Chemical mapping of a 207-nucleotide RNA with DMS and 2A3. The RNA was probed in 150 mM KOAc, 10 mM MgCl2 and 150 mM bicine (pH 8.5) at 24 C. The 2A3 profile rests on 3,973 reads. Source: RMDB library RNAMAK, as collected in RNAgym. For DMS, 1,185 sequencing reads were counted.
[RMDB]
RNA sequence: GGGAACGACUCGAGUAGAGUCGAAAAGAUAUGGAGAGUCAUUUCCUAUAAUCGUGUACGAAGUAAUGUCGGAAACGACAUUACGGAGUACACGGUAGGAAAUGUCUCUCCUAAGUCAAAACACUUAAGUAACUUCUUCGGAAGUUACUUAAGUGAACUCUCUAACAUCCUUCGGGAUGUUAGAGAGAAAAGAAACAACAACAACAAC
Reactivity to DMS in 0.01 (KOAc 150mM, MgCl2 10mM, bicine 150mM(pH8.5), 24C), signal-to-noise 1, nucleotides 027 to 156: g020a140u000a300u000g000g060a000g000a000g090u000c020a070u000u000u000c000c000u000a130u000a040a090u010c030g030u020g000u020a000c010g020a300a300g000u000a000a060u000g010u000c020g000g000a160a080a300c090g010a060c030a000u000u000a000c040g050g140a300g000u000a000c020a000c000g000g070u020a010g020g050a000a030a000u000g020u000c000u000c020u000c000c000u000a000a090g000u000c050a090a090a150a100c020a000c000u000u000a030a040g000u000a000a030c000u000u000c030u080u000c300g010g020a030a080g030u000u000a000c000u000u000a020a000g020u000g030a050a100
Reactivity to 2A3 in 0.01 (KOAc 150mM, MgCl2 10mM, bicine 150mM(pH8.5), 24C), signal-to-noise 2, nucleotides 027 to 156: g020a010u070a030u130g000g000a010g000a000g010u010c000a000u000u000u020c000c010u030a060u110a120a170u170c000g000u000g000u000a000c000g010a020a010g000u000a000a010u000g000u000c000g030g030a090a070a070c010g000a000c020a000u000u000a000c000g000g000a000g000u000a000c000a000c000g000g000u000a010g000g000a000a010a000u000g000u000c000u000c000u000c000c000u000a010a000g010u010c020a020a000a090a110c000a000c000u000u000a000a000g000u000a000a000c000u000u000c020u050u100c250g090g000a000a000g000u010u000a000c000u000u000a000a000g000u000g000a000a000